[RMDB]
RNA sequence: GGGAACGACUCGAGUAGAGUCGAAAACGUUGUAGCAAAAGUACCGCCGGUCUCACUGUGCUGACUGCCCGCCCGCCUGUGGGAGGCAGUGGCGGCCCCGGGGCCUGGCCACAGCGCCCUCCCAGCAAUGGGUUACACCAUUCGUGGUGUAACCCAUAAAAGAAACAACAACAACAAC
Reactivity to DMS in 0.01 (KOAc 150mM, MgCl2 10mM, bicine 150mM(pH8.5), 24C), signal-to-noise 1, nucleotides 027 to 126: c100g030u010u000g030u020a070g050c040a020a100a140a050g020u000a070c100c060g000c040c060g000g000u000c060u000c050a150c090u030g020u000g030c030u020g050a090c050u010g000c020c000c050g000c000c010c010g030c110c050u010g100u000g050g000g020a150g020g010c000a050g020u010g000g030c010g000g030c020c010c060c210g010g000g030g050c160c020u000g020g000c050c060a060c030a080g030c100g020c090c010c040u000c000c000c020a110g000c300a090
The record gives the reactivity of an RNA of 177 nucleotides to DMS. The reactions ran in a buffer of 150 mM KOAc, 10 mM MgCl2 and 150 mM bicine (pH 8.5), at 24 C. DMS adducts were read by reverse transcription with MarathonRT. Source: RMDB library OK2TRN, as collected in RNAgym.